The data come from the RNA Mapping Database (RMDB), library OK3TST. Chemical mapping of a 207-nucleotide RNA with 2A3 and DMS. 2A3 adducts were read by reverse transcription with SuperScript II with manganese. For DMS the reverse transcriptase was MarathonRT. The reactions ran in a buffer of 150 mM KOAc, 10 mM MgCl2 and 150 mM bicine (pH 8.5), at 24 C. The DMS profile rests on 10,266 reads.

[RMDB]
RNA sequence: GGGAACGACUCGAGUAGAGUCGAAAAUCUGCUCUUUUGAGCAGAUCCUCUGUGUGCAGAGGAAACUCCAAUUAACAUUGCAAAGGAGCUCUACACCUUUUAUCUGGUGUAGAGAAAACAUCGUAUGCUUUUUUUUGUAUACGUAUGAGGCAAUGAAGUGGGUGGGAAAGUUCGCUUUCUCGCUCACAAAAGAAACAACAACAACAAC
Reactivity to 2A3 in 0.01 (KOAc 150mM, MgCl2 10mM, bicine 150mM(pH8.5), 24C), signal-to-noise 3, nucleotides 027 to 156: u000c000u000g000c000u000c000u030u180u110u270g000a000g000c000a000g000a000u000c000c000u000c000u000g070u010g060u070g180c020a000g000a000g000g000a000a010a010c020u000c000c000a010a000u050u030a030a010c000a000u000u000g000c010a010a010a060g030g000a020g000c000u000c000u000a010c000a000c000c000u000u060u040u080a140u100c100u060g020g000u000g000u010a000g000a000g000a000a000a000a000c000a000u010c000g000u000a000u000g000c000u090u000u010u000u000u010u060u080g000u000a000u000a000c000g010u030a010u020g010a020g020g040c000a000a000u000g000a100a010
Reactivity to DMS in 0.01 (KOAc 150mM, MgCl2 10mM, bicine 150mM(pH8.5), 24C), signal-to-noise 3, nucleotides 027 to 156: u010c000u000g010c000u000c000u000u000u000u000g020a030g020c000a000g010a040u000c000c020u010c010u010g010u000g050u010g060c050a020g010a040g020g010a080a080a070c050u000c020c030a100a180u010u000a150a210c020a030u000u010g020c000a090a100a190g010g000a240g000c000u000c010u000a010c000a020c000c000u000u000u010u000a120u010c260u010g000g030u010g010u000a000g000a020g000a010a030a050a150c020a040u000c010g030u000a000u000g010c000u000u000u000u000u000u000u000u000g010u000a010u000a010c000g010u000a010u000g010a200g010g020c020a020a020u000g010a080a180

The 2A3 profile rests on 5,146 reads.